[RMDB]
RNA sequence: GGGAACGACUCGAGUAGAGUCGAAAACAUAGGUGCCUGAUGAUUAAUCUCUGUUUGUUGGGUGCGGCCCAUUAAAUAGUCCAAGGAGACAGAAAAAUAGUCUGCUAUUUUUAAAAGAUUCUCUACUCACAACAGGAAAUUUCGAUUUCCUGUUGUGAAAAGAAACAACAACAACAAC
Reactivity to 2A3 in 0.01 (KOAc 150mM, MgCl2 10mM, bicine 150mM(pH8.5), 24C), signal-to-noise 2, nucleotides 027 to 126: c020a100u300a080g000g090u050g010c000c010u030g010a030u030g000a010u110u190a220a180u090c040u000c040u120g020u110u110u000g040u000u010g000g000g000u020g000c020g020g110c000c000c000a040u080u070a030a010a090u090a020g060u010c050c040a060a090g090g000a020g010a010c010a010g130a020a180a000a000a000u040a010g030u070c020u030g080c000u040a100u020u100u030u130u170a110a210a020a030g030a040u050u000c030u010c010u060a070c000u020
The data come from the RNA Mapping Database (RMDB), library RFM100. The record gives the reactivity of an RNA of 177 nucleotides to 2A3.